[RMDB]
RNA sequence: GGGAACGACUCGAGUAGAGUCGAAAAUGCGUCAAAGGGAUUCCAGCCUGUGAUCUCAACUGAGAAACCCCGUCCUGCUUGGAUGAUGCAGGUAUGUGGACUUGCUGGAAAACAGGUCCUCAUACCCUAACUGCGGAAACCGGUCGAGGCCCGGAAGGACCUAGUUGUCCUUCGGGACAACUAGGUCAAAAGAAACAACAACAACAAC
Reactivity to 2A3 in 0.01 (KOAc 150mM, MgCl2 10mM, bicine 150mM(pH8.5), 24C), signal-to-noise 2, nucleotides 027 to 156: u100g010c010g040u040c040a070a050a080g050g010g000a030u060u070c030c000a010g010c030c050u150g070u190g160a220u050c030u060c040a070a210c070u130g020a050g060a220a070a060c000c000c010c000g020u010c010c000u040g140c050u110u200g050g070a050u040g030a040u100g030c000a010g000g000u010a010u000g000u010g010g020a010c000u000u020g050c040u170g090g100a010a000a030a050c000a000g000g010u010c000c000u000c010a000u000a010c000c000c000u070a120a040c050u050g000c010g070g000a120a080a030c000c010g030g030u070c040g050a050g050g000c060c000c000g030g000a030a040g060